[RMDB]
RNA sequence: GGGAACGACUCGAGUAGAGUCGAAAAUAGCGCAGCCACGUCGUAACGCAGAAUGCUGAUCUCCGGUCUUCGGUACGCUUCGCGGUCCUUCACCCAGAUGCAAUGGUAUCCUACGCACGCGAUGACCAUAUCGUCUACUAGCGUCGCGUCGCGGUCACACCGGUUACGCAUUCGUGCGUAACCGGUGAAAAGAAACAACAACAACAAC
Reactivity to 2A3 in 0.01 (KOAc 150mM, MgCl2 10mM, bicine 150mM(pH8.5), 24C), signal-to-noise 1, nucleotides 027 to 156: u220a030g090c040g000c020a000g000c040c030a090c010g060u060c010g020u100a130a000c000g000c110a050g060a130a060u140g030c070u060g020a160u110c070u000c020c020g030g030u060c150u160u160c120g010g020u020a040c000g030c050u020u010c060g050c030g000g030u140c030c010u070u050c030a070c050c130c000a080g010a080u110g040c000a030a070u040g000g100u080a030u080c000c010u010a010c000g000c010a000c000g000c020g020a030u000g100a130c000c060a090u050a070u140c170g110u000c110u020a110c070u060a030g050c000g030u000c000g000c000g000u000c030g000c000g000g000u060c020a040